[RMDB]
The record gives the reactivity of an RNA of 177 nucleotides to 2A3 and DMS. It was measured as part of the RMDB library OK1LIB. For 2A3, 591 sequencing reads were counted. The reactions ran in a buffer of 150 mM KOAc, 10 mM MgCl2 and 150 mM bicine (pH 8.5), at 24 C. For DMS the reverse transcriptase was MarathonRT.
RNA sequence: GGGAACGACUCGAGUAGAGUCGAAAAAGCUGGGCGUCAUGGCGCACGCCUGUUAAUUUCAGCUACUGGGGAGACUGAGGCAGGAGAGUUGCUUGAGCCUGGGAGACGGAGGUUGCAGUGAGCUGAGGCGAACGAGCGUAUUCGUACGCUCGUUCGCAAAAGAAACAACAACAACAAC
Reactivity to 2A3 in 0.01 (KOAc 150mM, MgCl2 10mM, bicine 150mM(pH8.5), 24C), signal-to-noise 2, nucleotides 027 to 126: a000g110c130u180g000g000g060c010g120u000c010a110u260g110g080c040g000c040a000c030g010c000c000u040g010u020u090a060a180u000u110u000c060a050g020c040u090a060c040u070g000g000g060g070a010g020a040c010u030g030a000g000g060c000a000g020g090a000g020a070g090u110u200g020c000u040u050g000a000g000c000c010u000g040g010g000a060g000a000c190g070g020a000g000g100u060u060g030c000a000g010u010g020a010g010c000u010g020a060g040
Reactivity to DMS in 0.01 (KOAc 150mM, MgCl2 10mM, bicine 150mM(pH8.5), 24C), signal-to-noise 1, nucleotides 027 to 126: a100g050c050u010g000g020g040c010g000u010c100a130u000g000g000c170g000c110a100c080g050c040c030u020g000u020u000a080a140u030u050u000c000a010g010c000u000a100c030u020g000g000g050g180a030g000a140c110u020g040a070g000g010c040a080g000g000a170g000a100g030u010u020g010c120u000u000g010a130g000c030c000u000g000g020g000a110g000a050c160g000g000a040g000g000u000u030g020c090a040g040u030g030a040g020c060u000g000a050g000